RNA sequence: GGGAACGACUCGAGUAGAGUCGAAAAUGGGUGCUCAAAGCCAACCAUGGGACUGAGCACGGGGUCCCCAAUGGAGGAGUUAGAGAAAGGAUCUGUAAGAGUAUACAGCCCUAUAGGAAGAACAACACAUGACCUAGCCAUUCGUGGCUAGGUCAUGAAAAGAAACAACAACAACAAC
Reactivity to DMS in 0.01 (KOAc 150mM, MgCl2 10mM, bicine 150mM(pH8.5), 24C), signal-to-noise 1, nucleotides 027 to 126: u010g010g050g090u010g010c000u030c010a000a110a180g010c040c010a070a170c170c220a120u000g010g000g030a100c210u010g010a040g010c010a020c030g000g010g020g000u000c030c000c010c120a100a090u010g000g060a100g040g000a090g000u000u010a130g000a070g020a050a180a040g000g000a060u000c070u000g000u010a000a070g000a110g030u010a110u000a030c050a060g000c190c000c010u030a060u000a150g010g010a080a050g000a020a080c080a060a060c150a150